[RMDB]
RNA sequence: GGGAACGACUCGAGUAGAGUCGAAAAUCAAGGCUGGUUUAGUCGGUGUGCUCACACUAGACAACCAGGACCUUAAUGGCAAGUGGUAUGAUUUUGGUGACUUCGUAAUCACUCAACCUGGUUCAGGGUUCUAGGAUAACUUCGGUUAUCCUAGAACAAAAGAAACAACAACAACAAC
Reactivity to 2A3 in 0.01 (KOAc 150mM, MgCl2 10mM, bicine 150mM(pH8.5), 24C), signal-to-noise 4, nucleotides 027 to 126: u040c020a000a000g030g000c020u010g010g010u020u040u200a050g010u020c010g000g020u010g000u030g070c070u140c090a020c000a010c010u070a110g010a000c000a000a000c010c000a000g010g010a000c000c010u060u040a090a030u100g050g020c040a060a020g020u000g060g010u080a040u070g080a100u020u040u060u110g110g000u060g020a020c010u030u010c060g040u030a070a090u040c000a000c030u040c020a020a070c000c020u080g100g040u120u090c040a040g110g000
Reactivity to DMS in 0.01 (KOAc 150mM, MgCl2 10mM, bicine 150mM(pH8.5), 24C), signal-to-noise 4, nucleotides 027 to 126: u000c060a040a040g000g010c010u000g010g000u000u000u010a080g020u000c000g000g010u000g010u000g010c300u020c280a110c010a000c010u000a060g020a010c020a060a040c000c000a010g000g020a090c010c010u000u000a050a090u000g000g000c140a090a060g030u000g000g010u010a050u010g010a050u000u000u000u000g010g020u000g000a050c070u010u000c100g020u010a100a080u000c040a020c020u000c090a080a170c030c020u000g000g010u000u000c070a090g000g000
An RNA of 177 nucleotides, treated with 2A3 and DMS and read out base by base. The DMS profile rests on 4,030 reads. The reactions ran in a buffer of 150 mM KOAc, 10 mM MgCl2 and 150 mM bicine (pH 8.5), at 24 C. The data come from the RNA Mapping Database (RMDB), library 15KREP.